[RMDB]
RNA sequence: GGGAACGACUCGAGUAGAGUCGAAAAGAGCCGGAGCGGCACAUGGUAUGACCCUUUAUGCUUUCCCUUGUGCAAUCCUUGUGGGGCUUGCGGCCAUGUUUUUCUCCCAACCGCUUCUCACCUUGCAGUAAUACGCUGAGUUCGCUCAGCGUAUUACAAAAGAAACAACAACAACAAC
Reactivity to 2A3 in 0.01 (KOAc 150mM, MgCl2 10mM, bicine 150mM(pH8.5), 24C), signal-to-noise 1, nucleotides 027 to 126: g040a010g040c050c040g000g000a040g040c060g090g060c020a000c010a060u030g020g000u150a070u190g130a160c000c010c080u010u110u080a180u060g060c020u030u060u050c030c030c000u030u060g030u030g010c010a030a090u060c010c000u060u040g060u110g030g080g050g040c040u020u090g110c010g040g010c000c020a000u040g020u010u090u060u090u010c020u000c000c000c020a000a050c000c040g000c060u000u070c000u010c030a080c040c030u030u070g010c020a010
Reactivity to DMS in 0.01 (KOAc 150mM, MgCl2 10mM, bicine 150mM(pH8.5), 24C), signal-to-noise 3, nucleotides 027 to 126: g000a160g030c130c120g000g000a040g000c050g010g010c100a020c030a020u020g020g010u000a240u010g010a120c030c020c020u000u010u030a100u020g010c080u010u000u000c010c020c000u000u000g030u010g010c050a040a100u010c050c010u000u000g020u010g020g000g010g000c110u010u000g000c050g010g000c050c060a080u000g000u010u020u000u000u010c110u010c000c040c040a110a140c070c030g000c040u000u000c020u020c080a090c090c060u000u000g010c170a140
Overview: An RNA of 177 nucleotides, treated with 2A3 and DMS and read out base by base. The reactions ran in a buffer of 150 mM KOAc, 10 mM MgCl2 and 150 mM bicine (pH 8.5), at 24 C. The DMS profile rests on 2,291 reads. Reactivities are rounded to 0.1 and cut off at 0 and 3.